[RMDB]
RNA sequence: GGGAACGACUCGAGUAGAGUCGAAAAUUCAUCACCUCGAAACUGCCCAUUUUGGGUAGCCCGGGUGUGUCAGCGGCUUCCUCGCGGUCAGCUGGUGGGCCGGCUGGACGCUGCUCGAUCUCCGGAGGUAACGAGAGGAUUUCGAUCCUCUCGUUACAAAAGAAACAACAACAACAAC
Reactivity to 2A3 in 0.01 (KOAc 150mM, MgCl2 10mM, bicine 150mM(pH8.5), 24C), signal-to-noise 3, nucleotides 027 to 126: u110u050c030a060u090c020a060c040c020u090c100g040a110a110a090c010u010g010c000c000c020a080u260u200u220u230g010g000g000u000a000g000c000c010c000g030g050g070u080g030u070g010u040c010a020g030c000g020g000c010u040u000c010c010u060c030g090c000g020g010u020c000a040g030c110u270g130g170u230g070g020g020c010c000g080g260c040u040g010g000a010c010g000c000u000g000c000u020c090g010a020u020c030u000c000c020g040g010a020g040
Reactivity to DMS in 0.01 (KOAc 150mM, MgCl2 10mM, bicine 150mM(pH8.5), 24C), signal-to-noise 2, nucleotides 027 to 126: u000u010c100a100u010c080a110c020c020u010c060g010a070a090a150c010u000g000c010c000c010a200u000u000u010u000g010g000g000u000a010g010c090c100c040g010g010g000u000g020u020g040u000c080a020g020c020g010g010c010u000u000c020c000u000c170g000c020g000g000u000c010a070g010c080u010g000g010u020g010g010g000c010c010g000g000c060u000g010g010a020c080g020c020u000g000c000u000c100g010a030u000c050u010c000c020g000g030a120g000